[RMDB]
RNA sequence: GGGAACGACUCGAGUAGAGUCGAAAAGUUUACGCUCCAAGAUCGGUGGAUAGCAGCCCUAUCAAUAUCUAGGAGAACUGUGCUAUGUUUAGAAGAUUAGGUAGUCUCUAAACAGAACAAAUUACCUCAUACGUUAGGACGUUCGCGUCCUAACGAACGUAAUCACUCCGUUCGCGGAGUGAUUACGAAAAGAAACAACAACAACAAC
Reactivity to 2A3 in 0.01 (KOAc 150mM, MgCl2 10mM, bicine 150mM(pH8.5), 24C), signal-to-noise 3, nucleotides 027 to 156: g030u040u090u110a080c070g010c000u000c000c000a020a030g010a040u060c090g070g220u110g080g030a030u050a010g040c060a010g020c070c000c000u030a040u030c010a030a060u020a010u160c010u040a060g000g030a020g050a030a040c070u100g010u030g070c040u070a020u100g010u010u010u010a070g000a270a010g000a080u070u060a030g080g020u050a020g010u010c000u000c000u010a000a000a000c010a020g020a010a040c080a020a060a030u110u040a030c000c010u060c050a090u080a150c010g000u010u000a000g000g000a000c000g010u040u040c240g030c020g060u000c000c000u010a000a000c000g000a030a000
An RNA of 207 nucleotides, treated with 2A3 and read out base by base.
Reactivities are given for positions 27 through 156.
The RNA was probed in 150 mM KOAc, 10 mM MgCl2 and 150 mM bicine (pH 8.5) at 24 C.
High 2A3 reactivity points to a flexible backbone, as in loops and unpaired stretches.
It was measured as part of the RMDB library M2RFPK.